[RMDB]
RNA sequence: GGGAACGACUCGAGUAGAGUCGAAAAUUGCUGCCUUCGAGUGGAUCCACGAAUCCAUCGCCGGCUUAUGGGAUUACAGCAAGUAUACAUUUCCAAGACAGUAUAUGGUAUGAUCUGAAACUGGAGCGUUGCACGAUGAUGCCAAAGACUGAGCUCAACUCCAUUAGUGAUUCGUCACUAAUGGAGUAAAAGAAACAACAACAACAAC
Reactivity to DMS in 0.01 (KOAc 150mM, MgCl2 10mM, bicine 150mM(pH8.5), 24C), signal-to-noise 2, nucleotides 027 to 156: u000u000g010c000u000g010c000c090u000u000c010g000a210g070u000g030g000a010u000c040c100a280c240g000a080a090u020c030c000a040u000c050g040c030c020g020g030c130u010u000a060u000g010g000g010a150u000u000a090c080a130g010c020a060a100g010u010a100u010a060c060a150u000u000u000c010c000a050a180g000a140c030a070g020u000a070u000a160u020g000g040u000a040u000g010a100u010c020u000g010a080a060a070c030u000g040g020a120g020c140g010u000u010g000c170a060c150g000a100u000g020a060u000g020c000c000a020a090a100g000a040c010u000g030a110g010c030u000c060a150
Reactivity to 2A3 in 0.01 (KOAc 150mM, MgCl2 10mM, bicine 150mM(pH8.5), 24C), signal-to-noise 5, nucleotides 027 to 156: u040u040g010c000u030g000c000c030u030u100c040g050a060g080u030g010g010a020u000c070c040a170c200g060a210a010u010c000c010a030u020c060g100c110c020g070g030c050u130u130a130u130g090g030g040a070u140u230a060c010a020g000c020a010a030g050u060a050u030a120c110a060u030u040u000c020c020a030a010g040a040c030a010g030u020a050u050a050u170g030g010u040a040u070g120a020u090c000u050g040a070a010a020c050u100g100g100a080g040c110g030u030u030g040c030a020c080g020a010u040g020a020u010g040c000c000a040a040a010g040a010c010u030g040a040g100c070u100c100a030